[RMDB]
RNA sequence: GGGAACGACUCGAGUAGAGUCGAAAACAUAUAAGGCUAGGCUUCGAGUGAUAAGCUGGCAAAGAACAGUGAAGUCUAAUAACUACCACGUUUGUAGAAGCAGAGUAAAUGCGGCGGAUAUAUGGAGAGAAAGAGCGUGCACCUUAAGCGUGGAGGUACCUUACGACGGGUUCGCCCGUCGUAAGGUAAAAGAAACAACAACAACAAC
Reactivity to 2A3 in 0.01 (KOAc 150mM, MgCl2 10mM, bicine 150mM(pH8.5), 24C), signal-to-noise 1, nucleotides 027 to 156: c090a040u150a020u060a300a150g060g000c010u040a100g000g030c000u030u010c040g000a060g020u000g070a200u160a150a000g010c000u040g010g000c050a150a160a000g050a040a060c030a040g000u000g060a000a000g020u000c010u120a030a120u070a120a030c030u100a080c000c040a030c050g000u000u040u070g110u040a010g010a130a000g090c050a000g010a010g000u240a020a060a060u010g000c030g000g050c050g010g020a000u030a000u000a020u160g040g010a090g000a000g000a060a020a000g030a010g010c030g000u020g100c040a010c030c000u020u070a000a100g010c000g000u000g020g000a040g010g030u010

An RNA of 207 nucleotides, treated with 2A3 and read out base by base. The reactions ran in a buffer of 150 mM KOAc, 10 mM MgCl2 and 150 mM bicine (pH 8.5), at 24 C. The data come from the RNA Mapping Database (RMDB), library PDB130.